[RMDB]
RNA sequence: GGGAACGACUCGAGUAGAGUCGAAAAGAGGUGGCGGCAGCAGCAGCGGCCCGGAGGUGGCAGCGCAACAACAUGCAGCGGCAAGCGCAGGCGUCGGGCAGACGGCGAGCGCAAGCUUUGGGACGGCCCUUCCAGGGUCUUUCGAGACCCUGGAAGGAAAAGAAACAACAACAACAAC
Reactivity to DMS in 0.01 (KOAc 150mM, MgCl2 10mM, bicine 150mM(pH8.5), 24C), signal-to-noise 1, nucleotides 027 to 126: g030a100g000g060u000g020g010c020g000g030c000a050g000c030a020g020c130a120g010c070g000g000c030c000c000g000g000a060g030g070u010g020g030c000a060g000c070g000c010a070a060c140a040a240c150a060u000g020c000a000g000c010g000g010c070a030a110g010c010g000c010a250g000g000c010g060u000c030g000g020g000c150a180g020a090c070g000g000c010g020a120g000c040g000c020a080a210g000c000u000u000u030g000g020g000a270c110g000g000c160
Reactivity to 2A3 in 0.01 (KOAc 150mM, MgCl2 10mM, bicine 150mM(pH8.5), 24C), signal-to-noise 1, nucleotides 027 to 126: g170a060g050g010u120g030g030c020g050g050c040a060g010c020a030g020c000a020g000c020g030g010c030c020c000g060g020a020g010g140u020g030g020c040a000g000c030g030c050a030a090c040a010a010c020a130u120g000c000a040g010c020g060g020c090a060a110g000c020g000c010a010g070g100c000g000u040c020g020g010g020c000a030g030a020c030g000g030c020g000a020g000c000g000c000a000a010g000c000u070u040u040g020g020g020a030c020g000g000c000